RNA sequence: GGGAACGACUCGAGUAGAGUCGAAAAGCAUCAAAGCGCGUUGCGUUGGCGCUGCGCUGCGUCAGAACCCGCAAAUGAAGCGGGCGCUGGAUAAUUUUAAAGCGGUGCUGGAUUUACGCGUCAACCAAUCGUAUACCUCAUUCGUGAGGUAUACGAUAAAAGAAACAACAACAACAAC
Reactivity to DMS in 0.01 (KOAc 150mM, MgCl2 10mM, bicine 150mM(pH8.5), 24C), signal-to-noise 7, nucleotides 027 to 126: g010c020a070u010c240a100a100a140g010c010g020c040g020u010u000g010c060g010u000u000g010g000c010g010c000u000g010c030g030c020u000g000c040g020u000c010a010g000a050a060c000c000c000g020c010a070a120a180u010g020a170a150g010c000g010g000g020c300g000c010u000g000g010a110u030a050a070u000u010u010u010a030a100a170g010c030g010g020u010g000c010u000g000g000a160u000u000u000a040c070g010c020g010u000c030a070a090c030c070a080
Reactivity to 2A3 in 0.01 (KOAc 150mM, MgCl2 10mM, bicine 150mM(pH8.5), 24C), signal-to-noise 5, nucleotides 027 to 126: g000c010a020u090c110a100a150a070g040c030g000c010g060u040u050g030c020g010u020u040g010g000c000g000c010u030g010c010g000c020u020g000c010g030u020c000a010g000a040a040c000c000c010g000c010a170a220a200u300g080a170a020g000c000g010g010g000c010g000c000u010g000g040a050u060a130a120u130u230u080u300a110a110a000g020c010g010g000u010g000c000u010g000g020a010u030u030u060a040c050g010c000g010u010c020a040a030c020c010a000